This 207-nucleotide RNA was probed chemically with DMS and 2A3. The DMS profile rests on 3,359 reads. It was measured as part of the RMDB library M2RFPK.

RNA sequence: GGGAACGACUCGAGUAGAGUCGAAAACAAUGCAGGUUAAGCCAAAGGGAUGUCCCGACGGGAGGCCGACAAUCCAGGGAACCGGAUGUCAUCACGUUGUUGCAGUACCAGAUGGCAUCUUAAAUCCAAAAGAACACAUAGUUCGCUAUGUGUUCAAUCUAUAUCGGAAGUUCGCUUCCGAUAUAGAAAAAGAAACAACAACAACAAC
Reactivity to DMS in 0.01 (KOAc 150mM, MgCl2 10mM, bicine 150mM(pH8.5), 24C), signal-to-noise 2, nucleotides 027 to 156: c050a080a030u000g020c010a090g030g010u020u010a050a110g050c030c010a070a090a140g010g010g000a090u000g010u010c030c000c000g010a180c070g000g000g000a130g000g040c030c030g020a100c070a030a080u000c010c020a100g020g010g020a090a100c050c080g000g000a010u000g010u000c000a040u000c030a140c100g000u000u000g020u020u010g010c000a090g030u010a090c070c050a140g000a070u000g000g000c000a020u000c010u000u000a060a090a110u000c040c110a050a010a140a210g020a020a010c010a000c010a010u000a020g010u000u010c300g040c000u010a000u000g000u010g000u000u000c000a040a090
Reactivity to 2A3 in 0.01 (KOAc 150mM, MgCl2 10mM, bicine 150mM(pH8.5), 24C), signal-to-noise 2, nucleotides 027 to 156: c070a010a140u190g070c010a030g040g000u110u130a080a030g050c030c050a100a040a040g050g000g050a080u070g100u080c040c020c010g020a020c020g030g020g010a030g050g000c030c020g030a010c010a060a080u000c030c070a020g000g040g000a010a050c020c020g030g000a000u010g010u010c000a000u010c020a020c110g030u030u030g010u030u040g030c060a040g040u100a130c030c020a020g000a000u000g000g000c010a000u000c000u000u020a020a080a010u030c020c000a020a060a020a040g000a010a000c000a010c000a000u000a010g010u050u070c170g010c160u000a000u000g000u000g000u010u000c000a000a000
The reactions ran in a buffer of 150 mM KOAc, 10 mM MgCl2 and 150 mM bicine (pH 8.5), at 24 C. DMS adducts were read by reverse transcription with MarathonRT.